Structure probing data (DMS and 2A3) for a 177-nucleotide construct. The DMS profile rests on 9,907 reads.
RNA sequence: GGGAACGACUCGAGUAGAGUCGAAAAGCAUACAACUUCGGUUGUAUGCAACGACAGAGUUGACUGUCAUAAACAACGUAACAUGUGAGAUACAAUAACACAUUGCAGCAGCUUUCGAGCUGCUGAAAGAUUAAGACUACUUCGGUAGUCUUAAUCUAAAAGAAACAACAACAACAAC
Reactivity to DMS in 0.01 (KOAc 150mM, MgCl2 10mM, bicine 150mM(pH8.5), 24C), signal-to-noise 7, nucleotides 027 to 126: g010c000a010u000a000c000a010a010c000u000u010c180g040g010u000u000g000u000a000u010g010c010a040a060c150g010a020c010a000g000a090g020u000u010g000a130c000u000g000u000c120a100u010a050a050a040c070a030a040c070g010u000a100a150c150a030u000g000u000g010a110g000a130u000a080c200a080a070u010a110a110c020a030c020a020u000u000g010c000a020g000c000a000g000c000u000u010u010c190g010a010g020c000u010g000c000u000g000a010a060
Reactivity to 2A3 in 0.01 (KOAc 150mM, MgCl2 10mM, bicine 150mM(pH8.5), 24C), signal-to-noise 6, nucleotides 027 to 126: g000c010a000u010a000c000a010a000c010u030u090c220g120g000u010u010g000u010a000u000g020c000a010a020c040g030a000c000a010g030a010g000u020u040g080a220c000u020g000u020c020a020u130a040a070a020c040a030a000c070g120u120a070a040c030a090u040g020u010g040a050g030a090u190a180c080a100a110u120a260a020c020a010c010a050u020u180g020c000a000g000c000a000g010c010u070u050u190c210g120a010g000c000u000g000c000u000g000a010a010